[RMDB]
RNA sequence: GGGAACGACUCGAGUAGAGUCGAAAAGAUAUGGACCGGGUGACCGUACUACCCACCCUACUGAGCUGCGCUCGGAAACGAGCGAACUACAGCGAAAGUAGGAGGUACGGUCACCCGGUCCUAAGUCCUUCAAUAUGCAGUUCGCUGCAUAUUGAAGAAAAGAAACAACAACAACAAC
Reactivity to DMS in 0.01 (KOAc 150mM, MgCl2 10mM, bicine 150mM(pH8.5), 24C), signal-to-noise 2, nucleotides 027 to 126: g020a140u000a240u000g020g000a010c010c000g000g000g010u030g020a030c000c000g040u000a040c040u000a140c060c070c160a300c130c010c000u000a000c020u000g010a300g000c000u000g020c000g030c000u000c000g000g000a090a070a180c010g020a000g000c000g010a010a070c120u010a300c010a010g000c010g000a190a060a010g020u000a010g000g020a060g000g010u000a000c010g010g000u020c000a010c000c010c000g000g000u010c000c000u000a010a080g000u000c010
Source information: The record gives the reactivity of an RNA of 177 nucleotides to DMS. DMS (dimethyl sulfate) methylates the pairing face of unpaired adenines and cytosines. Conditions: 150 mM KOAc, 10 mM MgCl2 and 150 mM bicine (pH 8.5), 24 C.